RNA sequence: GGGAACGACUCGAGUAGAGUCGAAAAAGUAGUGGUACGCCACUACAUCAGCUAGAUCAGCUGUUCCAUCUUAAUCAUAAAAUCUAAUUCAGGAUGAUUAAGAAGGAACAACUGAUUUUACUGAGAAGAAUGACAUUCACUUCGGUGAAUGUCAUUCAAAAGAAACAACAACAACAAC
Reactivity to 2A3 in 0.01 (KOAc 150mM, MgCl2 10mM, bicine 150mM(pH8.5), 24C), signal-to-noise 7, nucleotides 027 to 126: a000g000u010a000g000u010g020g000u050a060c240g030c020c000a010c000u000a000c000a060u010c000a000g000c030u040a000g000a010u000c000a000g000c010u000g000u000u000c000c010a020u000c000u010u000a010a000u000c000a040u120a100a270a070a050u090c120u120a210a150u230u230c060a030g160g010a050u030g000a000u000u000a000a000g000a020a040g010g000a000a000c000a000a010c010u000g000a000u000u000u020u020a000c000u000g010a010g040a100a010
Reactivity to DMS in 0.01 (KOAc 150mM, MgCl2 10mM, bicine 150mM(pH8.5), 24C), signal-to-noise 2, nucleotides 027 to 126: a140g000u000a010g000u030g010g000u010a060c300g000c000c000a000c000u000a010c010a060u010c010a000g000c090u000a040g000a000u000c010a000g020c050u000g000u000u000c000c000a100u000c020u000u000a000a020u000c000a030u000a120a090a090a010u030c140u020a100a120u020u050c150a110g010g010a010u000g030a030u000u000a020a010g030a010a030g000g010a000a000c010a000a000c000u000g010a000u000u000u040u000a110c000u000g040a020g010a170a090
This 177-nucleotide RNA was probed chemically with 2A3 and DMS. For DMS the reverse transcriptase was MarathonRT. The reactions ran in a buffer of 150 mM KOAc, 10 mM MgCl2 and 150 mM bicine (pH 8.5), at 24 C.